[RMDB]
RNA sequence: GGGAACGACUCGAGUAGAGUCGAAAAGUGGUGCAAUCUCAAUCUCAGCUCACUGCAACCUCCACCUACCAGGUUCAAGUGAUUCUCCCACCUCAGCCUUCCCAGUAGGUGGGACUACAGGCAUGCGUGGAUAUACAACGUUCGCGUUGUAUAUCCAAAAAGAAACAACAACAACAAC
Reactivity to DMS in 0.01 (KOAc 150mM, MgCl2 10mM, bicine 150mM(pH8.5), 24C), signal-to-noise 5, nucleotides 027 to 126: g020u010g010g020u000g010c070a100a080u000c030u010c080a110a120u010c070u010c050a120g020c110u000c040a050c040u010g010c130a050a080c030c020u000c020c030a050c050c030u000a060c040c100a050g010g000u010u000c080a090a080g010u000g010a100u010u000c070u000c010c010c000a020c020c020u000c080a090g000c050c060u010u000c010c010c000a170g010u010a010g010g010u000g000g010g010a040c050u010a030c090a060g010g010c040a030u000g020c140g030
Reactivity to 2A3 in 0.01 (KOAc 150mM, MgCl2 10mM, bicine 150mM(pH8.5), 24C), signal-to-noise 2, nucleotides 027 to 126: g050u030g110g010u090g010c050a100a140u050c040u040c080a110a130u040c050u020c080a050g000c040u010c020a030c010u020g020c030a020a080c010c020u040c030c010a040c000c000u090a100c000c030a000g020g030u030u050c070a090a060g000u050g070a060u120u010c040u020c020c000c000a030c010c010u060c030a040g050c000c030u030u010c020c030c010a020g020u070a000g010g000u000g010g010g000a010c000u020a010c040a030g010g060c060a020u070g040c060g030